[RMDB]
RNA sequence: GGGAACGACUCGAGUAGAGUCGAAAACGACCACACAGAAGUAGGCGCCGUACGGGUAGGUCAGAUUCGACGGGUUGUAGCAGACCUCGGCAUCCAGCCCGCCCUCGAUGCCCUCGGGCAGAUCGCCCCCGUAGUUGCUCUUCGGAGCAACUACGGGAAAAGAAACAACAACAACAAC
Reactivity to 2A3 in 0.01 (KOAc 150mM, MgCl2 10mM, bicine 150mM(pH8.5), 24C), signal-to-noise 2, nucleotides 027 to 126: c020g040a030c000c010a010c000a010c000a080g050a170a000g080u280a080g030g000c000g010c050c000g090u300a170c120g010g040g000u020a020g080g050u070c090a000g010a090u040u050c010g000a000c120g170g000g000u020u020g030u110a080g030c020a010g010a060c010c010u020c030g020g000c000a030u000c010c000a020g000c000c010c000g000c010c000c000u000c000g000a000u100g000c000c000c080u070c100g000g010g000c060a030g000a180u070c090g050c010c000
The record gives the reactivity of an RNA of 177 nucleotides to 2A3. For 2A3, 631 sequencing reads were counted. Values cover nucleotides 27 to 126. The reactions ran in a buffer of 150 mM KOAc, 10 mM MgCl2 and 150 mM bicine (pH 8.5), at 24 C. It was measured as part of the RMDB library OK1LIB.